The record gives the reactivity of an RNA of 177 nucleotides to DMS and 2A3. For 2A3 the reverse transcriptase was SuperScript II with manganese. The reactions ran in a buffer of 150 mM KOAc, 10 mM MgCl2 and 150 mM bicine (pH 8.5), at 24 C. High 2A3 reactivity points to a flexible backbone, as in loops and unpaired stretches.
RNA sequence: GGGAACGACUCGAGUAGAGUCGAAAAGAAAGAAAGAAAUCAGGUGUGGAAUUUAGAUAGAGUGGGUGUGUGCUCUUGUUUAAUUACACCAAGAUCACCACCCUCUAUCCAUAUCCCACAAUUGAAAAAUACGUCAUGUCUUCGGACAUGACGUAUUAAAAGAAACAACAACAACAAC
Reactivity to DMS in 0.01 (KOAc 150mM, MgCl2 10mM, bicine 150mM(pH8.5), 24C), signal-to-noise 3, nucleotides 027 to 126: g000a090a140a070g000a090a110a070g000a110a100a080u010c040a010g010g010u000g020u010g000g010a030a010u010u000u000a040g000a000u000a000g000a030g010u030g000g000g010u000g020u040g020u000g010c120u000c000u000u000g000u000u010u010a100a090u030u030a130c250a090c230c000a000a000g000a010u000c000a010c010c010a010c000c000c000u000c000u000a010u000c000c060a000u000a040u010c030c000c000a020c020a010a030u050u000g000a000a080a020
Reactivity to 2A3 in 0.01 (KOAc 150mM, MgCl2 10mM, bicine 150mM(pH8.5), 24C), signal-to-noise 6, nucleotides 027 to 126: g070a020a050a010g130a040a120a000g090a020a110a030u110c040a030g100g000u020g010u070g030g020a050a060u060u030u050a030g000a000u010a010g010a000g110u230g030g100g000u040g020u040g000u020g020c000u000c000u000u020g130u050u120u120a210a270u190u200a030c020a000c060c000a010a000g000a000u010c000a000c000c000a000c010c000c000u000c000u010a010u000c000c000a010u030a060u020c010c000c000a000c010a010a040u040u040g040a140a010a000